[RMDB]
RNA sequence: GGGAACGACUCGAGUAGAGUCGAAAACACGCGAUAAGUUGGAAAAACUUAUCUCUACUGCUCGUGAUGGCGUAAGGCGAGGCGAUAACUUCCAUAGUGUCUUAACAACAUUCAUUGACGCAGCACGGGGUAGUUUAAAGUUCGCUUUAAACUACCCAAAAGAAACAACAACAACAAC
Reactivity to DMS in 0.01 (KOAc 150mM, MgCl2 10mM, bicine 150mM(pH8.5), 24C), signal-to-noise 2, nucleotides 027 to 126: c040a120c190g010c200g000a010u010a000a010g010u010u020g000g010a130a080a070a020a000c000u000u000a010u000c000u010c110u020a090c000u000g010c020u010c020g000u000g000a010u020g010g010c250g010u000a010a070g020g020c010g010a070g000g040c210g010a040u010a110a060c110u000u010c020c100a160u000a130g000u020g030u000c010u000u000a040a020c080a080a170c020a030u000u000c050a040u000u010g020a010c190g020c000a070g010c210a030c150g050
Reactivity to 2A3 in 0.01 (KOAc 150mM, MgCl2 10mM, bicine 150mM(pH8.5), 24C), signal-to-noise 2, nucleotides 027 to 126: c010a010c040g080c010g010a010u010a020a000g000u010u010g120g050a240a070a030a010a000c000u010u010a040u000c010u010c010u090a070c010u000g020c000u010c020g020u030g010a030u040g020g020c020g030u020a020a010g000g000c010g010a050g050g020c040g010a040u060a130a040c050u090u010c020c030a090u020a110g140u110g020u060c020u050u060a090a030c020a000a000c000a020u070u110c020a040u010u300g000a020c060g000c000a010g010c030a030c090g040